[RMDB]
RNA sequence: GGGAACGACUCGAGUAGAGUCGAAAAAGGUCUUCGUUUCGUGUAUCUUUUUCACGAGCAUCCGCGCUUCGCUGGAGCUGCUUGGCGGGCAGAGAGCCGCCAGAGGUGGAGAUGCAUGUGCCGUUCAGUAUAGCUCACUCUUCGGAGUGAGCUAUACAAAAGAAACAACAACAACAAC
Reactivity to DMS in 0.01 (KOAc 150mM, MgCl2 10mM, bicine 150mM(pH8.5), 24C), signal-to-noise 1, nucleotides 027 to 126: a090g000g000u000c030u000u000c050g000u000u020u030c060g000u030g010u010a020u000c040u050u000u010u010u010c040a050c030g010a090g020c080a080u000c000c040g000c030g030c060u010u000c030g050c120u000g000g000a110g020c020u000g000c080u000u000g000g000c020g040g000g000c020a120g000a110g000a180g000c030c000g030c040c030a090g000a050g030g030u010g000g050a160g020a040u000g020c010a070u030g060u000g010c000c060g040u040u030c010a180
Reactivity to 2A3 in 0.01 (KOAc 150mM, MgCl2 10mM, bicine 150mM(pH8.5), 24C), signal-to-noise 6, nucleotides 027 to 126: a010g040g010u040c040u180u140c100g040u040u030u040c030g000u020g020u040a060u070c030u060u070u020u050u030c020a020c030g020a020g020c010a100u010c010c010g080c020g020c110u180u200c100g040c130u210g050g010a040g030c030u050g030c030u100u050g040g010c040g030g030g000c100a020g060a030g000a030g270c010c010g010c000c000a040g040a030g060g060u060g000g010a110g000a020u030g000c020a020u050g030u020g020c010c010g040u060u080c020a020
An RNA of 177 nucleotides, treated with DMS and 2A3 and read out base by base. The data come from the RNA Mapping Database (RMDB), library OK1LIB. The reactions ran in a buffer of 150 mM KOAc, 10 mM MgCl2 and 150 mM bicine (pH 8.5), at 24 C. For 2A3, 4,512 sequencing reads were counted. 2A3 adducts were read by reverse transcription with SuperScript II with manganese.